[RMDB]
RNA sequence: GGGAACGACUCGAGUAGAGUCGAAAAUUAGGAUAUACUGUUGAAGCAAACAGUGGCACACACAGGCUUACAGUCUUUGUUUUUUAAACCAGUUACCACUAAUGUAUUAAGCCCUGCAGCAGUUACCACUGACUUCUCGCACGCAUAAAAUGAACCACACGAUAUGACUGUUCGCAGUCAUAUCGUGAAAAGAAACAACAACAACAAC
Reactivity to DMS in 0.01 (KOAc 150mM, MgCl2 10mM, bicine 150mM(pH8.5), 24C), signal-to-noise 1, nucleotides 027 to 156: u000u010a060g030g000a070u020a050u000a060c010u000g000u000u000g050a180a110g030c000a090a070a140c060a160g030u000g000g000c070a050c070a100c130a170c040a160g030g000c010u000u050a060c050a090g040u000c080u000u000u010g040u000u000u000u000u000u000a030a060a090c040c050a090g020u000u000a050c040c020a050c050u020a050a090u000g010u000a100u000u000a060a180g010c000c000c000u030g000c050a050g060c040a040g000u000u000a050c050c020a140c000u000g000a080c040u020u000c030u000c050g020c130a060c020g080c080a050u000a020a030a070a070u000g020a050a200c050c010a150
Reactivity to 2A3 in 0.01 (KOAc 150mM, MgCl2 10mM, bicine 150mM(pH8.5), 24C), signal-to-noise 2, nucleotides 027 to 156: u060u040a020g000g040a020u010a010u010a170c050u030g060u110u090g080a030a030g050c100a070a050a020c020a030g030u040g030g000c090a040c010a010c000a000c020a110g020g030c010u030u160a030c060a060g050u030c020u060u050u020g040u070u080u040u000u000u180a060a080a040c090c000a010g000u050u050a040c010c010a020c050u060a070a040u070g020u060a060u190u060a130a050g070c030c040c060u030g000c000a030g000c000a010g000u000u070a040c030c000a010c020u030g020a040c010u070u010c040u030c030g000c030a010c050g030c040a000u170a070a170a050a030u200g080a040a030c020c050a020
Source information
Chemical mapping of a 207-nucleotide RNA with DMS and 2A3. For 2A3, 1,042 sequencing reads were counted. For 2A3 the reverse transcriptase was SuperScript II with manganese. For DMS, 1,448 sequencing reads were counted. Reactivities are given for positions 27 through 156. It was measured as part of the RMDB library OK3TST.